An RNA of 207 nucleotides, treated with 2A3 and read out base by base.
2A3 adducts were read by reverse transcription with SuperScript II with manganese.
It was measured as part of the RMDB library RNAMAK.
The RNA was probed in 150 mM KOAc, 10 mM MgCl2 and 150 mM bicine (pH 8.5) at 24 C.
The 2A3 profile rests on 2,415 reads.
RNA sequence: GGGAACGACUCGAGUAGAGUCGAAAAACCUUUGUGCCUAUGGAGGAACCUACUUCUUGGCGAACAGUACUGCCCAUUGGGCAGUACGGAGAGUGGGUUCCGUUGAAAUAGGCACUCUGGUAAAACGACUUGAACUAGUUCGCUAGUUCAAGUCGAACGAGCACUGUUAGUUCGCUAACAGUGCUCGAAAAGAAACAACAACAACAAC
Reactivity to 2A3 in 0.01 (KOAc 150mM, MgCl2 10mM, bicine 150mM(pH8.5), 24C), signal-to-noise 2, nucleotides 027 to 156: a000c010c020u000u010u010g010u000g010c010c000u000a000u010g000g030a040g010g000a000a000c000c010u020a000c050u150u270c000u010u020g020g000c000g000a000a020c010a010g020u000a000c000u010g000c000c040c090a300u260u300g010g000g000c000a000g000u000a000c000g000g000a030g000a000g000u000g000g000g020u010u020c000c000g000u000u010g000a000a000a000u000a000g000g000c000a000c000u010c000u010g000g000u040a030a030a030a120c020g000a000c000u000u000g000a000a000c000u000a000g020u100u060c190g030c130u000a000g000u000u010c020a000a000g000u000c000g000a000a010